[RMDB]
This 207-nucleotide RNA was probed chemically with DMS and 2A3. Conditions: 150 mM KOAc, 10 mM MgCl2 and 150 mM bicine (pH 8.5), 24 C. High 2A3 reactivity points to a flexible backbone, as in loops and unpaired stretches. In probing experiments dimethyl sulfate is read out at A N1 and C N3, which are open when not base-paired.
RNA sequence: GGGAACGACUCGAGUAGAGUCGAAAAGAUUGCAGCUGAUCUUGCUGUGAGAAGGUAUAUGGUUGAGAUUCUCAUUGACGCAAACAGAGCCCCUUCCCCGAAAGCAAGAGUCCUUGAGCUGAUUUGCGAUAUCGGGAACUAUAUAAGUGAAGCAGGGCCAAAUUGAAUUAUUCGUAAUUCAAUUUGGAAAAGAAACAACAACAACAAC
Reactivity to DMS in 0.01 (KOAc 150mM, MgCl2 10mM, bicine 150mM(pH8.5), 24C), signal-to-noise 4, nucleotides 027 to 156: g010a160u000u000g020c010a110g010c040u000g000a110u000c050u020u000g020c020u000g010u000g010a080g000a100a070g020g020u000a070u000a080u000g010g010u000u020g010a160g010a160u010u000c040u000c040a150u010u010g010a130c070g000c020a040a070a100c060a100g010a190g020c040c010c010c030u000u000c030c000c010c030g000a060a100a220g030c030a040a100g000a120g030u000c020c070u000u000g000a120g020c030u000g010a150u010u000u000g000c060g000a140u000a100u000c050g020g030g000a060a050c030u000a080u000a100u000a040a130g010u000g000a060a060g020c030a070g000g000g000
Reactivity to 2A3 in 0.01 (KOAc 150mM, MgCl2 10mM, bicine 150mM(pH8.5), 24C), signal-to-noise 5, nucleotides 027 to 156: g070a030u100u140g020c040a020g010c020u050g050a090u090c040u080u110g010c010u030g030u040g010a030g020a060a020g060g020u070a100u040a060u250g090g020u080u090g050a060g010a130u070u000c030u010c030a020u020u130g060a030c060g000c030a000a100a080c030a080g050a050g050c000c020c000c000u030u020c020c000c000c010g020a030a040a000g010c010a000a020g000a020g070u060c030c050u150u190g040a050g030c020u020g050a230u020u020u060g000c020g010a020u020a070u210c010g000g010g000a000a010c030u020a010u040a040u030a300a060g030u030g060a020a010g000c050a030g000g010g000